An RNA of 207 nucleotides, treated with DMS and 2A3 and read out base by base.

[RMDB]
RNA sequence: GGGAACGACUCGAGUAGAGUCGAAAACAGUAGUACCGAUAUCAAGUUCGAUAUUGAACCUUACAUCCUUGCCAAUGAAUUAGACCUUGCAAUGAUAGAUAAGACAGAAGCAGAGACUAAUCAAAUCCAAAUCAAUAACUUAUUAGCUAUUGCCCCACUACCAUACAAAUUUCGAUUUGUAUGGUAGAAAAGAAACAACAACAACAAC
Reactivity to DMS in 0.01 (KOAc 150mM, MgCl2 10mM, bicine 150mM(pH8.5), 24C), signal-to-noise 3, nucleotides 027 to 156: c050a150g000u010a060g000u000a080c070c030g020a050u000a210u000c090a090a150g010u010u010c060g010a110u010a060u000u000g020a090a040c010c030u020u010a060c070a070u010c020c010u000u000g010c050c020a070a200u000g010a060a120u000u010a080g010a060c040c040u010u000g000c060a090a100u000g010a130u000a100g020a160u000a030a110g000a210c020a100g010a160a120g010c020a030g020a080g010a110c050u000a060a080u000c060a030a050a110u000c040c040a050a060a090u000c030a040a050u000a050a060c040u000u000a080u000u000a060g020c010u000a050u000u000g010c020c010c000c020a290
Reactivity to 2A3 in 0.01 (KOAc 150mM, MgCl2 10mM, bicine 150mM(pH8.5), 24C), signal-to-noise 9, nucleotides 027 to 156: c040a020g050u060a000g020u030a060c040c040g010a030u020a010u100c060a100a080g130u190u150c070g060a020u030a050u100u080g030a040a040c000c000u020u020a010c020a050u030c010c010u030u040g040c030c030a070a080u090g060a040a110u170u060a110g020a110c010c020u020u050g000c020a020a050u060g020a020u060a130g060a040u070a080a040g050a030c040a030g070a080a010g040c030a010g020a010g020a090c030u090a060a050u090c050a070a040a050u020c040c030a050a030a070u070c030a030a060u090a080a040c020u070u140a040u070u090a160g000c010u030a030u050u070g030c010c000c000c000a010

For 2A3 the reverse transcriptase was SuperScript II with manganese. DMS adducts were read by reverse transcription with MarathonRT. Conditions: 150 mM KOAc, 10 mM MgCl2 and 150 mM bicine (pH 8.5), 24 C. Reactivities are given for positions 27 through 156. Values are in units of 0.01, from 0 to 300, in steps of 10. Source: RMDB library OK3TST, as collected in RNAgym.